This 177-nucleotide RNA was probed chemically with 2A3 and DMS. For DMS the reverse transcriptase was MarathonRT.
RNA sequence: GGGAACGACUCGAGUAGAGUCGAAAAAAAAAAAGAUAUGGAUCUAUGCGAGCACUUACGUUGAAAGAACAUCGGAAACGAUGUUCUGGAGUAAGUGAUAAUCGUAAUAGAUCCUAAGUCAAAAAAACGAUAUGGUAUAGUUCGCUAUACCAUAUCGAAAAGAAACAACAACAACAAC
Reactivity to 2A3 in 0.01 (KOAc 150mM, MgCl2 10mM, bicine 150mM(pH8.5), 24C), signal-to-noise 2, nucleotides 027 to 126: a000a000a000a060a010a010a060g010a010u020a020u050g000g000a000u030c010u000a010u020g020c020g000a000g000c020a000c010u010u010a000c010g300u300u060g010a000a000a020g000a000a000c000a000u000c020g000g000a010a010a000c000g000a000u010g000u000u000c000u000g000g010a010g000u000a010a000g000u000g000a000u010a000a010u000c010g000u120a300a070u010a020g000a000u000c000c000u000a000a000g000u000c010a040a000a000a020a150a040a250
Reactivity to DMS in 0.01 (KOAc 150mM, MgCl2 10mM, bicine 150mM(pH8.5), 24C), signal-to-noise 2, nucleotides 027 to 126: a000a000a040a090a070a080a070g000a020u010a000u030g000g000a010u000c000u000a010u000g000c010g000a020g000c000a010c000u020u000a000c010g000u010u020g030a110a100a000g000a010a010c000a010u000c000g020g000a010a000a030c000g040a010u000g010u000u000c000u000g010g000a020g010u000a000a010g010u000g000a010u010a060a060u000c000g000u000a100a030u010a010g000a020u000c000c000u010a000a050g010u000c010a010a000a060a080a050a070a140
Source: RMDB library TTRDES, as collected in RNAgym. The DMS profile rests on 3,833 reads. 2A3 adducts were read by reverse transcription with SuperScript II with manganese. 2A3 is a SHAPE reagent: it acylates the 2'-hydroxyl of flexible nucleotides of all four kinds.